This 207-nucleotide RNA was probed chemically with 2A3.
2A3 adducts were read by reverse transcription with SuperScript II with manganese.
For 2A3, 3,213 sequencing reads were counted.
RNA sequence: GGGAACGACUCGAGUAGAGUCGAAAAAGCUGCUUCUUCUUGUUCUCGAGGGCCUUCCUUCGUCGGUGAUCCUGCCUCUCCUUGUCGGUGAAGCCACCCCUGGAGGGCCUCUUCCUAGGUCCGGAGUCUACUUCCAUCUGAUCGACUCGGGCCCUCUACCGUAUAGAUACUUCGGUAUCUAUACGGUAAAAGAAACAACAACAACAAC
Reactivity to 2A3 in 0.01 (KOAc 150mM, MgCl2 10mM, bicine 150mM(pH8.5), 24C), signal-to-noise 4, nucleotides 027 to 156: a010g100c100u100g010c010u090u050c000u060u020c010u100u100g070u140u070c030u040c060g030a060g000g010g030c000c000u050u030c010c000u070u060c100g170u060c090g000g000u020g010a070u060c020c020u030g020c000c010u070c020u100c060c070u090u130g180u290c110g000g020u040g080a060a010g020c030c000a010c020c010c000c030u000g010g000a020g010g010g000c000c000u000c000u030u010c000c000u020a020g000g000u000c000c030g170g050a020g010u000c020u050a100c070u170u040c060c050a230u130c150u180g060a190u140c080g000a010c000u000c000g010g000g000c000c000c000u010c010u000

The RNA was probed in 150 mM KOAc, 10 mM MgCl2 and 150 mM bicine (pH 8.5) at 24 C.